[RMDB]
RNA sequence: GGGAACGACUCGAGUAGAGUCGAAAAGCCUAACAGUUCGCUGUUAGGCAAAUGCACAGACUUCGCAACUGUGAUAAACACAACAGAAGUGUCUAUGCGAGGAUCGUUGCGUCUUCGGACGCAACAAGUCUAAUAGCACUUUCGAGUGCUAUUAGACAAAAGAAACAACAACAACAAC
Reactivity to 2A3 in 0.01 (KOAc 150mM, MgCl2 10mM, bicine 150mM(pH8.5), 24C), signal-to-noise 8, nucleotides 027 to 126: g000c000c000u000a000a000c000a010g060u090u120c150g050c120u000g000u000u000a000g000g000c000a020a030a010u120g000c000a010c010a010g030a030c010u040u020c040g010c050a070a080c060u020g000u010g040a010u190a030a140a010c050a010c020a080a150c040a090g120a180a030g130u040g040u090c030u060a070u050g000c010g020a030g050g040a100u130c110g000u000u000g000c000g000u000c000u010u020c190g090g000a000c000g000c000a000a000c000a000a010
Reactivity to DMS in 0.01 (KOAc 150mM, MgCl2 10mM, bicine 150mM(pH8.5), 24C), signal-to-noise 6, nucleotides 027 to 126: g000c000c000u000a000a010c000a000g020u000u010c200g040c000u010g000u000u000a010g010g010c000a000a020a020u010g020c020a010c020a020g000a050c020u000u010c030g010c110a120a140c090u000g000u000g000a120u010a100a130a140c060a040c080a070a090c160a120g010a080a080g000u010g010u000c020u000a080u000g010c010g010a080g010g010a100u010c180g010u000u000g010c010g000u000c000u000u010c150g010g000a010c000g010c000a000a000c010a050a080